RNA sequence: GGGAACGACUCGAGUAGAGUCGAAAAAUCAGCUCACGGCGCGAGUUGCGGGCGAGGGGCAGGACUCGGCGGAUAAGGGCACGGCGAAAGCUCAGUCGGUCGCGAUGCGCGUCUGCCUGUUGCAAGCUCGAAAAGGAAAGUUCGCUUUCCUUUUCGAAAAAGAAACAACAACAACAAC
Reactivity to 2A3 in 0.01 (KOAc 150mM, MgCl2 10mM, bicine 150mM(pH8.5), 24C), signal-to-noise 3, nucleotides 027 to 126: a000u050c010a020g010c030u030c050a080c100g010g000c000g000c000g000a030g070u020u010g020c020g010g030g050c020g010a030g020g000g020g000c030a020g010g030a040c040u010c060g040g030c040g050g050a120u120a240a100g090g080g060c120a070c080g040g000c030g030a090a010a020g000c000u010c030a060g170u020c020g080g300u020c010g000c010g010a020u060g040c030g000c000g000u020c020u030g020c010c010u050g020u080u050g030c040a050a020g020c010
Reactivity to DMS in 0.01 (KOAc 150mM, MgCl2 10mM, bicine 150mM(pH8.5), 24C), signal-to-noise 5, nucleotides 027 to 126: a090u010c060a070g020c040u010c060a100c120g000g010c020g020c040g010a150g030u000u000g020c030g010g000g000c020g020a040g000g000g010g000c010a050g020g010a220c100u010c020g000g010c010g000g000a180u020a100a180g010g010g010c110a090c040g010g010c010g010a110a100a090g010c010u010c010a050g000u000c010g000g010u010c010g010c010g000a040u010g020c030g030c000g000u010c010u000g000c240c060u000g000u000u000g010c110a090a120g000c130